Notes: The record gives the reactivity of an RNA of 177 nucleotides to DMS and 2A3. The 2A3 profile rests on 5,376 reads.
RNA sequence: GGGAACGACUCGAGUAGAGUCGAAAAGAUAUGGAGCUGGAACUACGAACAGCCGAAGAACGCUUUCGGAAACGAAAGCGGGAGGCUGUACGCCAGCUCCUAAGUCAAAGCGGACUUCGGUCCGCAAUCCUAACAUUUUCUUCGGAAAAUGUUAGGAAAAAGAAACAACAACAACAAC
Reactivity to DMS in 0.01 (KOAc 150mM, MgCl2 10mM, bicine 150mM(pH8.5), 24C), signal-to-noise 3, nucleotides 027 to 126: g000a030u000a300u000g010g000a030g040c020u000g000g040a110a090c140u010a300c050g010a120a020c020a020g000c000c010g020a070a110g000a110a200c010g010c020u000u000u010c000g020g000a090a080a130c000g000a000a000a000g000c000g010g010g000a050g000g040c020u010g020u000a040c040g000c000c000a020g000c010u000c000c010u000a010a080g000u000c020a030a080a190g010c000g000g010a010c000u000u010c130g010g030u000c010c010g020c000a000a010
Reactivity to 2A3 in 0.01 (KOAc 150mM, MgCl2 10mM, bicine 150mM(pH8.5), 24C), signal-to-noise 2, nucleotides 027 to 126: g020a010u080a030u150g000g000a000g010c010u020g030g040a130a090c170u200a090c300g070a110a010c020a010g000c000c000g060a140a050g020a030a000c000g000c010u020u010u020c020g010g010a070a070a060c000g010a010a000a020g010c050g010g000g010a000g010g000c020u010g000u020a000c000g000c000c000a000g000c000u000c000c000u000a000a010g000u020c020a060a070a010g000c000g000g010a000c000u050u100c300g110g010u000c000c000g000c000a000a010